[RMDB]
Chemical mapping of a 207-nucleotide RNA with 2A3.
The reactions ran in a buffer of 150 mM KOAc, 10 mM MgCl2 and 150 mM bicine (pH 8.5), at 24 C.
The data come from the RNA Mapping Database (RMDB), library OK3TST.
RNA sequence: GGGAACGACUCGAGUAGAGUCGAAAAGCUACCAGUGAUGGCACGCGGGGCCUCGAGAUGAAGACAAGGAGGCUGCAGACGCCUGUGGUCCUUGGGGAGCUUCUGGCUCUGCUUCCCCCCAAGGCCUCCUGCCGCAUCCUGCCUUCUCCAUCCCCUAGCAUAGGCAUUAGUUCGCUAAUGCCUAUGCAAAAGAAACAACAACAACAAC
Reactivity to 2A3 in 0.01 (KOAc 150mM, MgCl2 10mM, bicine 150mM(pH8.5), 24C), signal-to-noise 2, nucleotides 027 to 156: g020c030u080a070c030c070a060g010u040g120a130u140g060g040c000a050c110g090c110g020g020g000g000c000c050u080c180g200a220g010a060u200g020a130a030g060a040c060a170a050g000g000a000g020g000c000u000g010c000a000g010a050c090g110c040c070u140g040u060g040g020u200c010c000u050u030g030g000g010g010a000g000c000u190u040c060u160g120g010c040u030c050u140g070c020u050u050c050c000c000c030c000c000a000a000g000g000c000c010u020c010c010u010g000c000c020g000c010a000u050c000c000u000g010c020c010u000u050c050u000c010c020a060u050c000c020c020c000u020a040